[RMDB]
RNA sequence: GGGAACGACUCGAGUAGAGUCGAAAAGAUAUGGAUUGUCAGCUGGGACAUCAGGUCGGAAACGACCUGAGUGUAACAGCUUGGAUUUAUCCUAAGUCAAAGCCCCUUACCUUCGGGUAAGGGGCAACCAUUAUUCAUGGUUCGCCAUGAAUAAUGGAAAAGAAACAACAACAACAAC
Reactivity to DMS in 0.01 (KOAc 150mM, MgCl2 10mM, bicine 150mM(pH8.5), 24C), signal-to-noise 7, nucleotides 027 to 126: g000a040u010a300u010g000g000a000u000u000g010u010c000a030g010c000u000g000g010g010a010c000a060u000c000a010g000g010u000c000g000g000a100a100a260c000g010a010c000c000u000g000a020g030u000g010u000a010a010c010a010g000c000u000u010g010g010a020u000u010u000a010u000c000c000u000a070a140g010u000c030a090a120a160g010c000c000c000c000u000u000a000c000c000u000u010c240g020g000g010u000a000a000g010g000g010g010c000a000a010
Reactivity to 2A3 in 0.01 (KOAc 150mM, MgCl2 10mM, bicine 150mM(pH8.5), 24C), signal-to-noise 5, nucleotides 027 to 126: g030a020u090a060u160g000g010a010u000u040g010u030c010a010g000c000u010g010g000g050a000c000a020u010c000a000g000g000u010c010g030g050a110a060a080c020g000a010c010c020u010g000a010g030u070g010u000a030a010c000a000g000c000u010u090g030g000a010u190u190u130a020u020c010c000u030a190a010g070u040c050a090a060a050g000c010c000c000c000u000u000a000c000c000u030u080c300g160g000g000u000a000a000g000g000g000g000c000a000a000